[RMDB]
RNA sequence: GGGAACGACUCGAGUAGAGUCGAAAAGUGAAUCCUCCCCUGAGAGGCCUCUUCCUAGGUCCGGAGUCUACCUCCAUUUGGUCUGUUCGGGCCCUCUUCGCCGGGGGAGCCCCCUCUCCAUCCUUGUCCUUCUUUCCGAGAAUUCCUUUGAUGUUUCGAUAUAAUUAAUCUUCGGAUUAAUUAUAUCAAAAGAAACAACAACAACAAC
Reactivity to 2A3 in 0.01 (KOAc 150mM, MgCl2 10mM, bicine 150mM(pH8.5), 24C), signal-to-noise 1, nucleotides 027 to 156: g040u060g060a100a240u110c020c010u000c010c010c000c050u020g060a070g060a050g050g000c000c020u010c040u100u080c000c000u040a040g000g060u050c010c010g000g040a030g000u110c150u190a060c010c000u040c010c000a000u180u060u250g020g000u000c010u080g130u040u070c100g030g010g000c050c050c040u020c060u070u110c060g110c080c050g010g000g000g010g000a000g000c000c000c000c000c000u020c000u000c000c010a130u000c000c010u020u080g030u080c000c000u030u070c020u050u040u060c040c010g040a040g030a100a090u060u030c040c030u150u040u150g120a100u070g010u000u000u000c010